Conditions: 150 mM KOAc, 10 mM MgCl2 and 150 mM bicine (pH 8.5), 24 C.
This 207-nucleotide RNA was probed chemically with 2A3.

[RMDB]
RNA sequence: GGGAACGACUCGAGUAGAGUCGAAAACACACACGACGCUGCACCGGCUGCGGCACCGGCUGCCCCGGUUUGGCGCGCCAACGCGGAGCCCGCUCGGCGUCUUCGGGACCAUGAACAGCGCGUACAGCGACUGCGACGUGCUGGGGAACUACGCGUCCCCAGAAGCAUACUUCGGUAUGCUUCUGGGAAAAGAAACAACAACAACAAC
Reactivity to 2A3 in 0.01 (KOAc 150mM, MgCl2 10mM, bicine 150mM(pH8.5), 24C), signal-to-noise 1, nucleotides 027 to 156: c200a010c030a030c010a040c020g270a070c050g070c010u030g020c040a020c030c040g000g000c160u150g010c030g000g010c010a100c090c140g230g000c080u090g000c000c050c000c000g070g000u000u210u100g080g060c000g000c000g000c000c010a030a000c000g000c020g020g000a020g080c010c030c030g060c000u060c040g060g030c020g030u010c000u140u030c100g070g010g000a000c020c020a020u060g010a100a050c040a000g000c000g000c000g080u100a120c120a110g020c010g300a220c210u300g000c000g020a010c000g030u010g000c010u010g020g000g000g040a120a060c020u120a040c070g030c050g060u080c020